RNA sequence: GGGAACGACUCGAGUAGAGUCGAAAAAUGAUUCGUAGUGUAAGACGUUCGACAGUCAUCGCUUGCCAGCAGGACCACCAAAGGAAUACGCUUCGGUAACUACUCGAGAUCCCAAGCGAUAAAACAACACAGGUAUUGGAUUCGUCCAAUACCUGUGAAAAGAAACAACAACAACAAC
Reactivity to 2A3 in 0.01 (KOAc 150mM, MgCl2 10mM, bicine 150mM(pH8.5), 24C), signal-to-noise 2, nucleotides 027 to 126: a000u100g030a050u060u030c050g020u080a050g020u030g070u160a100a050g080a060c040g030u040u060c040g110a040c060a030g020u050c010a030u060c040g010c050u040u130g030c040c000a040g000c020a040g020g060a010c010c020a020c020c040a040a000a120g070g030a040a040u040a030c030g000c030u020u020c010g000g080u050a130a130c010u000a000c000u000c020g020a000g030a050u000c040c000c000a010a010g030c030g100a070u130a130a120a020a030c050a010a020
Reactivity to DMS in 0.01 (KOAc 150mM, MgCl2 10mM, bicine 150mM(pH8.5), 24C), signal-to-noise 2, nucleotides 027 to 126: a090u010g010a120u010u010c060g040u010a080g050u000g040u000a030a060g030a110c060g020u000u000c060g030a090c080a020g000u000c040a060u000c090g010c040u010u010g010c080c020a080g000c020a070g020g000a130c080c060a040c030c040a070a080a130g020g010a110a080u000a070c080g000c110u000u000c060g000g000u000a050a130c000u010a010c000u000c010g010a010g010a110u020c000c000c000a060a060g020c120g020a080u030a040a060a090a050c130a110a100
Chemical mapping of a 177-nucleotide RNA with 2A3 and DMS. For DMS the reverse transcriptase was MarathonRT. For DMS, 1,476 sequencing reads were counted. 2A3 adducts were read by reverse transcription with SuperScript II with manganese. The reactions ran in a buffer of 150 mM KOAc, 10 mM MgCl2 and 150 mM bicine (pH 8.5), at 24 C. It was measured as part of the RMDB library M2PK90.